This 207-nucleotide RNA was probed chemically with DMS and 2A3. The data come from the RNA Mapping Database (RMDB), library ARCHII. For 2A3, 10,711 sequencing reads were counted. Conditions: 150 mM KOAc, 10 mM MgCl2 and 150 mM bicine (pH 8.5), 24 C. DMS adducts were read by reverse transcription with MarathonRT.
[RMDB]
RNA sequence: GGGAACGACUCGAGUAGAGUCGAAAAUAGAGAACAAAUGAUUCUUUCGCUAAGACAUUUGCUGAAGCCUUGAAGAGCAGUAGUCAUCCUUACUGCUAGUUCAACUUAUUGUUGAGCAACAUUGCCAAAUUGCGGGAAAGUCUUAAUGACUUCGCUACAUUAACAAAUAGUUCGCUAUUUGUUAAUGAAAAGAAACAACAACAACAAC
Reactivity to DMS in 0.01 (KOAc 150mM, MgCl2 10mM, bicine 150mM(pH8.5), 24C), signal-to-noise 5, nucleotides 027 to 156: u000a100g000a280g020a080a040c020a030a040a030u000g000a250u010u000c010u000u010u010c250g020c160u000a060a080g020a060c010a030u000u000u010g030c010u010g010a070a090g000c030c050u010u000g030a070a120g010a060g020c020a020g010u000a040g000u000c090a150u000c110c040u000u000a030c020u000g010c010u000a100g040u010u000c010a020a030c020u010u000a130u000u000g020u000u000g000a050g000c020a090a110c110a060u000u000g020c010c040a060a160a090u000u000g010c000g010g020g010a070a030a040g010u000c020u000u000a110a150u000g000a040c010u000u000c030g010c020u000a100
Reactivity to 2A3 in 0.01 (KOAc 150mM, MgCl2 10mM, bicine 150mM(pH8.5), 24C), signal-to-noise 9, nucleotides 027 to 156: u140a010g080a010g030a090a020c020a020a050a040u050g050a150u120u030c010u040u080u100c080g030c120u080a040a010g010a000c010a020u030u030u060g010c060u090g030a050a040g030c010c030u060u060g090a100a030g040a010g070c020a000g000u020a000g050u070c040a080u140c050c020u030u040a010c000u000g000c000u020a030g010u000u010c000a010a020c030u120u170a100u190u300g000u000u010g000a000g010c000a010a040c020a100u030u170g020c010c010a040a070a120u080u110g000c010g010g030g070a150a080a020g000u010c010u080u240a210a140u260g000a010c000u030u000c030g000c000u020a020